An RNA of 177 nucleotides, treated with 2A3 and DMS and read out base by base.
For DMS the reverse transcriptase was MarathonRT.
It was measured as part of the RMDB library OK1LIB.
2A3 adducts were read by reverse transcription with SuperScript II with manganese.
The reactions ran in a buffer of 150 mM KOAc, 10 mM MgCl2 and 150 mM bicine (pH 8.5), at 24 C.
RNA sequence: GGGAACGACUCGAGUAGAGUCGAAAACGGGGUUCUGCGAAUCAUGUGACUGGUUGCUACCGCGGCGGGGUAAAGACCUGUUGGUUUUUCGAACCCUGGGAUAUGUGGAUCAUUUUUGUCCCGCUGCGUGUAUUAUAAUUUUCGAAUUAUAAUACACAAAAGAAACAACAACAACAAC
Reactivity to 2A3 in 0.01 (KOAc 150mM, MgCl2 10mM, bicine 150mM(pH8.5), 24C), signal-to-noise 9, nucleotides 027 to 126: c010g000g000g000g010u020u010c020u070g040c030g050a020a020u040c020a050u110g070u070g150a050c050u050g030g030u030u050g040c020u070a050c010c030g010c010g040g010c010g000g020g000g000u020a020a020a020g040a030c010c010u030g090u090u090g040g010u010u010u000u040u110c030g010a010a010c000c000c000u000g010g010g020a070u080a070u230g110u120g100g070a100u090c040a110u030u070u070u080u110g030u040c010c000c010g000c010u030g010c020
Reactivity to DMS in 0.01 (KOAc 150mM, MgCl2 10mM, bicine 150mM(pH8.5), 24C), signal-to-noise 9, nucleotides 027 to 126: c030g010g010g000g010u000u000c000u010g020c140g000a040a020u010c030a080u030g030u030g010a090c080u000g010g010u000u000g000c300u010a050c050c020g010c030g020g010c050g020g010g010g020u000a010a030a280g000a030c020c010u000g000u010u010g000g010u000u000u000u020u030c280g010a020a020c000c000c010u000g000g000g010a090u020a020u020g010u010g010g000a100u030c060a090u000u000u010u020u010g000u010c000c000c000g010c060u010g010c210